[RMDB]
RNA sequence: GGGAACGACUCGAGUAGAGUCGAAAACGGCGGUCUGGCGAUGCUGCGCGGCGAGGACGCUUUUACUUACGAGGUCGUCGAGGUCAAGACGGUGACCGCCAGCGGCCUGGACCUGGUGCGGCCCGUCCAGGCCGCGUGGGGAACUGGCUCGCGACUGAUUCAACAGAAGAUUCGUCUUCUGUUGAAUAAAAGAAACAACAACAACAAC
Reactivity to 2A3 in 0.01 (KOAc 150mM, MgCl2 10mM, bicine 150mM(pH8.5), 24C), signal-to-noise 3, nucleotides 027 to 156: c020g010g010c010g010g050u040c040u080g060g010c030g060a060u060g050c080u070g020c070g000c030g060g010c020g020a030g050g010a020c020g010c020u050u070u100u090a070c050u090u060a040c070g110a060g080g000u010c010g040u080c080g030a010g000g060u060c070a040a040g050a040c030g000g030u060g070a180c010c010g080c050c000a000g010c000g010g010c000c000u000g000g010a020c030c070u070g000g020u090g030c090g030g080c010c020c010g000u020c000c000a000g000g000c000c000g000c000g000u030g000g000g000g020a000a040c020u030g130g030c020u010c020g000c000g010a010c000u030g020
Reactivity to DMS in 0.01 (KOAc 150mM, MgCl2 10mM, bicine 150mM(pH8.5), 24C), signal-to-noise 2, nucleotides 027 to 156: c060g020g030c020g010g020u000c030u010g010g030c020g030a140u010g020c040u010g020c070g010c040g000g010c030g020a090g000g010a100c030g020c020u000u000u050u010a090c080u000u010a100c070g010a120g020g010u010c000g010u030c000g010a100g030g000u000c070a090a110g000a050c050g020g000u010g000a160c020c010g010c020c010a120g010c020g020g020c010c010u000g010g020a020c020c020u010g040g030u000g010c090g030g010c060c000c100g010u000c040c040a080g020g030c020c000g000c000g010u010g070g010g000g000a300a080c040u000g010g010c030u000c040g020c030g030a150c060u000g020

Notes
This 207-nucleotide RNA was probed chemically with 2A3 and DMS. Values are in units of 0.01, from 0 to 300, in steps of 10. Values cover nucleotides 27 to 156. It was measured as part of the RMDB library OK3TST. DMS adducts were read by reverse transcription with MarathonRT. The RNA was probed in 150 mM KOAc, 10 mM MgCl2 and 150 mM bicine (pH 8.5) at 24 C.